Structure probing data (2A3 and DMS) for a 207-nucleotide construct. The RNA was probed in 150 mM KOAc, 10 mM MgCl2 and 150 mM bicine (pH 8.5) at 24 C. It was measured as part of the RMDB library M2RFPK. DMS adducts were read by reverse transcription with MarathonRT.
RNA sequence: GGGAACGACUCGAGUAGAGUCGAAAAAGUCACCUAUUACGAUAGGUGACAUUUGAACCAGCGAGCAAUUCAGUUGCGAGAUUCGAGGUUUCAGUCUGAAUCAUAGUAGCCAUUACGAUGGCUACAACUCACUCCCGACUGUUCGCAGUCGGGAGAACUAUAAUCUCCUCUUCGGAGGAGAUUAUAGAAAAGAAACAACAACAACAAC
Reactivity to 2A3 in 0.01 (KOAc 150mM, MgCl2 10mM, bicine 150mM(pH8.5), 24C), signal-to-noise 4, nucleotides 027 to 156: a000g010u010c010a000c000c010u010a000u040u080a060c210g040a000u000a010g000g000u000g000a000c000a000u030u040u110g020a020a000c010c000a010g120c000g000a000g020c020a070a100u040u030c000a010g010u000u000g000c000g010a000g000a010u000u000c010g000a020g010g060u100u180u300c020a020g120u050c000u010g000a010a020u060c080a080u110a140g000u000a000g000c000c000a010u040u060a070c240g110a030u030g000g000c000u000a000c000a000a000c020u100c040a070c010u000c010c000c000g010a000c000u010g010u060u100c220g000c140a000g000u000c000g000g010g000a000g000a000a000
Reactivity to DMS in 0.01 (KOAc 150mM, MgCl2 10mM, bicine 150mM(pH8.5), 24C), signal-to-noise 2, nucleotides 027 to 156: a100g010u000c000a000c000c000u000a010u010u000a110c300g020a080u000a000g010g030u010g010a000c000a010u000u000u000g030a130a150c020c020a100g000c040g000a020g050c030a110a050u000u000c040a100g020u000u000g000c040g000a160g000a050u000u000c020g020a250g010g000u000u010u010c050a120g010u000c070u000g010a030a060u000c120a120u010a150g000u000a010g010c000c010a050u000u000a150c220g010a100u000g010g020c000u010a010c000a030a050c070u000c040a090c010u000c000c000c000g000a000c000u000g000u000u010c300g040c020a020g020u000c000g030g000g090a000g000a000a040